[RMDB]
RNA sequence: GGGAACGACUCGAGUAGAGUCGAAAAAGAAAACUGGCUCUCCCUUAGCCAUCCGAGUGGACGUCUGUCCUCCUUCGGAUGCCCAGGUCGGACCGCGGGGAGGUGGAGAUGCCAUGCCGACCCGAAGUUACGGAUCCCUUCGGGGAUCCGAAAAGAAACAACAACAACAAC
Reactivity to DMS in 0.01 (KOAc 150mM, MgCl2 10mM, bicine 150mM(pH8.5), 24C), signal-to-noise 3, nucleotides 027 to 129: a200g030a000a000a000a000c150u030g000g000c040u040c020u000c000c000c000u040u000a060g000c300c000a070u000c000c050g080a040g060u040g010g030a040c020g010u110c150u110g010u010c000c000u000c000c000u000u030c040g050g010a040u000g040c040c040c010a160g030g020u040c120g000g000a300c050c090g030c130g050g000g000g010a050g040g010u030g040g000a040g040a030u070g020c080c000a000u000g030c080c050g000a000c020c020c010g040a060a050g000u040u080a230
Reactivity to 2A3 in 0.01 (KOAc 150mM, MgCl2 10mM, bicine 150mM(pH8.5), 24C), signal-to-noise 4, nucleotides 027 to 129: a000g100a000a010a000a020c060u010g000g010c000u000c010u000c000c010c000u020u120a030g030c010c010a010u000c030c000g000a000g000u010g020g000a020c020g110u120c210u300g000u000c010c030u040c070c020u150u080c030g000g000a000u010g000c010c010c000a020g040g030u050c040g080g080a060c010c010g080c080g040g000g030g020a040g020g020u120g000g040a070g000a080u220g000c030c000a040u080g020c000c000g030a050c040c000c010g000a020a000g020u080u100a050
Record summary:
Conditions: 150 mM KOAc, 10 mM MgCl2 and 150 mM bicine (pH 8.5), 24 C. An RNA of 170 nucleotides, treated with DMS and 2A3 and read out base by base. For DMS the reverse transcriptase was MarathonRT. The data come from the RNA Mapping Database (RMDB), library 15KLIB.